[RMDB]
RNA sequence: GGGAACGACUCGAGUAGAGUCGAAAAUCGCCGAUGACGUAGCUCAGCCGGCGGUUGACCCGGUAGGUCCCGCCGGGGGUGUGCACCCAGGGCAGCAUGCGCAGGAGCCAACGCGAGGUGAUGCCCUACUGCUAUAUGUCUUCGGACAUAUAGCAGUAAAAGAAACAACAACAACAAC
Reactivity to 2A3 in 0.01 (KOAc 150mM, MgCl2 10mM, bicine 150mM(pH8.5), 24C), signal-to-noise 2, nucleotides 027 to 126: u010c000g000c030c000g040a120u050g050a080c040g010u050a000g000c020u020c020a040g050c040c010g000g000c000g000g000u060u130g000a010c000c010c030g000g170u270a100g000g040u020c020c010c010g000c010c030g030g020g000g060g010u050g020u050g020c000a040c030c030c070a080g060g110g000c040a030g030c010a030u050g000c110g030c030a020g060g130a000g000c010c040a080a000c010g010c020g010a010g000g030u020g020a010u030g010c000c000c000u000
Reactivity to DMS in 0.01 (KOAc 150mM, MgCl2 10mM, bicine 150mM(pH8.5), 24C), signal-to-noise 2, nucleotides 027 to 126: u000c000g010c050c000g000a300u000g000a070c020g000u010a190g030c020u000c020a300g000c050c010g000g020c000g000g000u000u010g000a070c010c000c110g040g010u010a190g010g000u000c010c000c000g010c040c010g040g010g010g000g010u000g050u000g010c090a170c050c000c120a110g000g000g020c070a130g010c060a100u000g000c030g000c040a090g030g000a070g010c000c040a010a050c030g000c030g000a270g030g010u000g000a030u000g010c000c000c000u000